Description: Structure probing data (2A3 and DMS) for a 177-nucleotide construct. For 2A3 the reverse transcriptase was SuperScript II with manganese. High DMS reactivity at an A or C suggests that its Watson-Crick edge is free. Conditions: 150 mM KOAc, 10 mM MgCl2 and 150 mM bicine (pH 8.5), 24 C. Source: RMDB library OK1LIB, as collected in RNAgym. DMS adducts were read by reverse transcription with MarathonRT. Values cover nucleotides 27 to 126.
[RMDB]
RNA sequence: GGGAACGACUCGAGUAGAGUCGAAAAACUUGAAGUCAGCUUCGACCUUGCCUCUAUGGGCAAGUUGUACCACUUCUGUCCACACUGUAGGCGUAACGCGUUCCACGAGGUACUUCAAAGGAUAGAACCCAGUAUACCUCUUCGGAGGUAUACUGGGAAAAGAAACAACAACAACAAC
Reactivity to 2A3 in 0.01 (KOAc 150mM, MgCl2 10mM, bicine 150mM(pH8.5), 24C), signal-to-noise 6, nucleotides 027 to 126: a000c040u070u080g020a020a000g050u090c040a050g070c010u020u020c010g060a080c040c020u030u050g010c000c010u100c070u170a210u300g000g000g000c000a020a030g010u010u070g040u050a060c000c010a050c040u050u030c020u060g060u020c010c000a040c020a030c110u100g060u160a030g020g040c050g040u070a110a020c040g010c020g080u130u060c030c000a050c040g000a010g030g020u030a030c000u010u030c020a070a060a030g020g030a060u090a150g070a090a040
Reactivity to DMS in 0.01 (KOAc 150mM, MgCl2 10mM, bicine 150mM(pH8.5), 24C), signal-to-noise 3, nucleotides 027 to 126: a060c050u020u010g000a030a040g010u010c130a180g020c020u000u000c040g020a140c110c080u010u000g000c050c000u000c160u040a170u060g000g000g000c000a010a000g000u010u000g030u070a060c140c080a070c080u020u040c050u000g000u000c000c010a110c080a030c100u000g010u020a050g000g030c010g000u010a030a060c080g000c050g010u030u010c000c020a190c060g000a030g000g000u010a010c020u010u020c050a000a070a060g010g000a100u010a060g020a170a280